RNA sequence: GGGAACGACUCGAGUAGAGUCGAAAACAACAGAGUAAGACCCUGCGCGUUAAGUGCCGCAUCAACGGGGAGUUGUGCUGCGGACGAAGGUAUUAGCCACGGUGCAGGGUCUGCAUCCCGCUGCUGAAAAAGACGGCAGCCUUCGGGCUGCCGUCAACAUCAAUAGAUUGUUCGCAAUCUAUUGAUGAAAAGAAACAACAACAACAAC
Reactivity to 2A3 in 0.01 (KOAc 150mM, MgCl2 10mM, bicine 150mM(pH8.5), 24C), signal-to-noise 1, nucleotides 027 to 156: c050a020a020c010a050g080a000g110u130a160a000g010a040c000c000c000u000g000c010g020c000g010u010u080a200a050g050u100g160c010c000g040c100a120u200c020a000a010c020g010g000g020g180a070g000u070u050g010u020g010c060u030g000c000g010g020a000c010g030a060a000g040g000u020a170u210u190a250g070c010c040a010c090g030g000u080g020c010a000g010g010g000u000c000u000g000c000a030u030c020c000c000g000c020u110g020c000u050g050a050a100a000a090a090g010a010c000g010g000c080a000g040c000c030u040u080c130g070g000g000c010u000g080c070c000g000u000c020a000a000